The record gives the reactivity of an RNA of 177 nucleotides to DMS and 2A3.
Values cover nucleotides 27 to 126.
[RMDB]
RNA sequence: GGGAACGACUCGAGUAGAGUCGAAAACUACAAGAAGGGCUUCCCGUGCCGUUGGGGACUCUUCUUCGCGCGGGCUCUUGUCUGGAAGUAGGUUUUUUACUGUGGACAUUUGUCGCCGUAGGGCAACCAUCCUAAUGUGGUUCGCCACAUUAGGAUGAAAAGAAACAACAACAACAAC
Reactivity to DMS in 0.01 (KOAc 150mM, MgCl2 10mM, bicine 150mM(pH8.5), 24C), signal-to-noise 3, nucleotides 027 to 126: c020u000a080c110a080a040g010a050a010g000g000g000c180u000u000c000c000c000g020u000g020c160c170g030u020u000g020g020g000g010a040c010u000c000u000u000c000u000u000c140g010c120g000c010g000g010g000c050u010c030u000u000g010u000c000u000g000g010a160a020g010u000a020g010g020u000u010u010u010u010u000a010c010u000g010u000g000g000a030c020a040u000u000u000g010u010c030g010c000c010g010u010a070g000g000g000c110a060a080c110
Reactivity to 2A3 in 0.01 (KOAc 150mM, MgCl2 10mM, bicine 150mM(pH8.5), 24C), signal-to-noise 2, nucleotides 027 to 126: c010u060a020c040a020a010g020a010a010g040g030g040c120u090u030c040c010c010g010u070g130c030c080g160u130u140g000g020g000g030a050c010u000c000u010u030c000u010u010c020g020c010g010c020g050g070g130c030u000c000u060u090g000u000c020u050g080g030a130a010g020u060a060g010g130u100u030u070u040u230u120a030c050u060g090u150g090g000a010c010a020u050u060u070g040u070c050g020c090c000g050u040a040g000g040g040c020a020a020c030